[RMDB]
RNA sequence: GGGAACGACUCGAGUAGAGUCGAAAAGGGAAGAGUUAUCUUUUCUGCUUAACGGCCUGCCAACCCUGGAAUCGGUUCAGCCGGAGGUAGGGUCCAGCGGUCGGAAGAGCACCGCACGUCGCGCGGUACUACUAGAGUAGUUCGCUACUCUAGUAGUAAAAGAAACAACAACAACAAC
Reactivity to 2A3 in 0.01 (KOAc 150mM, MgCl2 10mM, bicine 150mM(pH8.5), 24C), signal-to-noise 7, nucleotides 027 to 126: g050g010g030a050a020g060a060g100u180u160a260u120c000u020u030u030u020c060u060g000c000u020u010a060a010c000g000g000c000c030u120g000c010c020a010a010c010c010c000u010g060g150a040a060u040c010g020g020u140u170c090a100g090c020c010g020g010a020g090g110u110a010g020g000g000u090c070c040a020g010c000g010g000u000c000g000g000a140a100g020a010g010c010a010c010c000g020c010a030c070g270u180c040g010c030g000c010g070g000u000
Reactivity to DMS in 0.01 (KOAc 150mM, MgCl2 10mM, bicine 150mM(pH8.5), 24C), signal-to-noise 7, nucleotides 027 to 126: g010g010g010a020a010g000a060g010u010u020a070u000c010u000u000u000u000c020u000g020c010u000u000a070a300c030g010g000c010c010u020g040c020c210a140a060c010c010c000u000g000g010a090a100u000c020g010g000u000u010c300a190g000c010c000g000g010a040g000g000u000a020g000g000g000u000c100c180a090g010c040g010g010u000c010g000g010a060a100g000a020g010c030a130c020c000g010c010a070c100g000u010c170g020c150g010c010g000g010u000